[RMDB]
RNA sequence: GGGAACGACUCGAGUAGAGUCGAAAAUAAAAGAGCGUACGACUCACAAAGACUGUACGACAGUCUGACUCUGUCGUACGCUUGUUCAACGAGAGAGAGAGUGCGUUGGAACAAGUGUGAAAAAAAAGACUGGGUUAAGGUUCGCCUUAACCCAGUCAAAAGAAACAACAACAACAAC
Reactivity to 2A3 in 0.01 (KOAc 150mM, MgCl2 10mM, bicine 150mM(pH8.5), 24C), signal-to-noise 1, nucleotides 027 to 126: u250a030a110a010a000g030a010g000c000g030u010a010c000g010a010c010u000c050a030c010a020a030a000g030a030c000u010g050u160a120c140g110a090c230a000g010u000c030u010g000a010c030u010c020u040g010u000c000g010u030a000c010g000c020u000u040g000u000u020c000a010a020c000g010a000g030a000g000a010g000a010g010a030g160u090g030c040g010u030u030g050g010a050a010c040a050a090g080u060g050u150g120a090a010a020a000a000a020a020a000
Reactivity to DMS in 0.01 (KOAc 150mM, MgCl2 10mM, bicine 150mM(pH8.5), 24C), signal-to-noise 1, nucleotides 027 to 126: u010a120a040a070a210g000a090g000c000g010u000a010c000g000a010c000u000c090a030c040a070a180a010g000a040c000u000g030u010a190c250g000a140c000a000g020u000c030u000g020a300c300u000c010u000g000u030c000g020u010a000c000g040c000u020u010g040u000u010c090a020a060c050g000a040g020a090g010a090g010a030g000a070g000u010g000c040g010u000u010g000g000a090a030c080a030a050g030u000g000u010g000a000a000a010a090a070a020a100a090
Chemical mapping of a 177-nucleotide RNA with 2A3 and DMS. Reactivities are rounded to 0.1 and cut off at 0 and 3. For 2A3, 1,268 sequencing reads were counted. Reactivities are given for positions 27 through 126. It was measured as part of the RMDB library M2PK90. The reactions ran in a buffer of 150 mM KOAc, 10 mM MgCl2 and 150 mM bicine (pH 8.5), at 24 C.